[RMDB]
RNA sequence: GGGAACGACUCGAGUAGAGUCGAAAACGGAGGCUCAUGCCUGUAAUCCCAACACUCUGGGAGGCUGAGGUGGAAGGAUCGUUUGAGCCCAGGAGUUUGAGACCAGCGUGGGCAACAUAGUGAGACCGAUAGCCCUUAGUUUCGACUAAGGGCUAUCAAAAGAAACAACAACAACAAC
Reactivity to 2A3 in 0.01 (KOAc 150mM, MgCl2 10mM, bicine 150mM(pH8.5), 24C), signal-to-noise 2, nucleotides 027 to 126: c030g030g080a030g010g070c010u030c080a030u110g040c010c000u030g040u060a050a030u020c000c000c000a000a000c080a010c020u060c030u060g060g090g030a130g060g000c040u050g060a020g000g060u040g030g040a180a090g100g070a100u110c030g050u020u060u080g040a010g000c000c020c000a020g030g000a050g020u040u100u140g040a040g020a020c040c000a000g010c030g040u050g000g020g000c040a030a000c010a050u080a010g060u050g030a060g030a050c020c050
Reactivity to DMS in 0.01 (KOAc 150mM, MgCl2 10mM, bicine 150mM(pH8.5), 24C), signal-to-noise 5, nucleotides 027 to 126: c090g010g020a130g010g010c010u000c060a050u000g000c110c030u000g010u000a160a150u000c010c000c000a030a100c140a070c060u010c030u000g000g020g030a100g000g010c040u000g000a060g010g010u000g020g020a150a110g000g010a070u010c030g010u000u000u000g010a070g010c010c010c020a200g000g000a060g010u000u000u000g000a080g000a050c060c020a040g010c030g030u010g000g000g000c010a040a080c080a080u000a080g010u000g010a130g010a190c080c080

Chemical mapping of a 177-nucleotide RNA with 2A3 and DMS. It was measured as part of the RMDB library OK2TRN. For DMS the reverse transcriptase was MarathonRT. 2A3 adducts were read by reverse transcription with SuperScript II with manganese.